Structure probing data (2A3 and DMS) for a 207-nucleotide construct.
RNA sequence: GGGAACGACUCGAGUAGAGUCGAAAAAUGCGGUUCGCCGCAUGGCCACGCGUACUACAAGUUGAGGCUUUGCUAGAAGAGGUCCCAAAUAGGACCUCCUUCUUGGACCAAAGCUACCCACCAACUUGUAUCGCCUACAGACGAAUUCGUUCGUCAACACAUUCGUUUUGUUCGCAAAACGAAUGUGAAAAGAAACAACAACAACAAC
Reactivity to 2A3 in 0.01 (KOAc 150mM, MgCl2 10mM, bicine 150mM(pH8.5), 24C), signal-to-noise 3, nucleotides 027 to 156: a000u020g010c020g030g070u040u100c280g030c100c000g000c010a010u020g050g010c030c000a120c080g040c010g030u090a130c020u000a000c030a000a000g000u000u010g010a010g010g000c000u000u020u010g000c010u010a000g000a000a000g000a000g000g010u030c020c030c030a180a250a170u230a030g000g000a000c000c020u010c040c040u000u000c010u030u070g050g040a030c060c060a000a010a000g010c010u040a060c060c040c000a070c010c000a000a000c000u010u000g000u010a020u300c000g000c000c020u100a090c060a100g030a000c020g010a020a040u120u150c130g070u140u010c000g020u030c020a050a030
Reactivity to DMS in 0.01 (KOAc 150mM, MgCl2 10mM, bicine 150mM(pH8.5), 24C), signal-to-noise 2, nucleotides 027 to 156: a080u000g000c020g040g040u000u000c250g040c000c010g000c010a030u000g010g020c030c030a160c220g020c100g010u010a060c070u000a020c020a000a040g010u000u000g000a050g020g010c010u000u000u020g010c040u000a030g010a070a030g020a030g010g000u000c010c000c000a120a150a220u010a080g040g000a010c000c000u000c060c000u000u000c020u000u000g050g010a120c190c010a030a020a030g020c010u000a000c020c000c020a300c110c010a030a030c020u000u000g000u000a040u000c040g010c010c020u000a150c070a060g000a030c000g010a110a030u010u020c180g000u000u010c020g020u000c020a040a280
Values are in units of 0.01, from 0 to 300, in steps of 10. 2A3 adducts were read by reverse transcription with SuperScript II with manganese. The 2A3 profile rests on 3,103 reads.